[RMDB]
RNA sequence: GGGAACGACUCGAGUAGAGUCGAAAAGAGAAAUUCGUAAGUCUCUUUGCUACUUUAAUGACUUUUUCUGGUAAUGUAGAUCUUGAUGCGUUAGCUAGUGAUAUUUUUGACACUCCUAGCGUACUUCGCUCUAUUAUAUCUUCGGAUAUAAUAGAGCAAAAGAAACAACAACAACAAC
Reactivity to DMS in 0.01 (KOAc 150mM, MgCl2 10mM, bicine 150mM(pH8.5), 24C), signal-to-noise 9, nucleotides 027 to 126: g010a020g010a020a040a060u010u000c270g010u010a170a170g000u000c000u000c000u000u000u000g000c020u000a010c020u000u000u000a100a120u010g010a080c290u000u010u000u010u010c100u010g010g010u000a030a040u010g010u000a010g000a030u000c010u000u000g010a070u000g010c020g010u000u000a050g010c130u000a030g020u000g010a090u000a040u000u010u010u010u010g010a150c050a030c050u000c300c000u000a000g000c010g010u000a030c100u010u010c300
Reactivity to 2A3 in 0.01 (KOAc 150mM, MgCl2 10mM, bicine 150mM(pH8.5), 24C), signal-to-noise 9, nucleotides 027 to 126: g010a000g000a000a040a030u150u110c080g020u140a070a050g040u010c000u000c000u020u020u020g010c000u010a030c010u080u090u160a140a100u180g100a080c020u160u140u070u170u110c080u140g090g020u070a060a070u060g010u020a010g010a050u000c000u020u100g040a050u060g010c010g010u020u020a000g010c050u010a000g010u010g070a070u030a140u160u160u070u110u190g040a020c000a000c010u000c000c000u000a000g000c000g000u010a030c030u040u110c060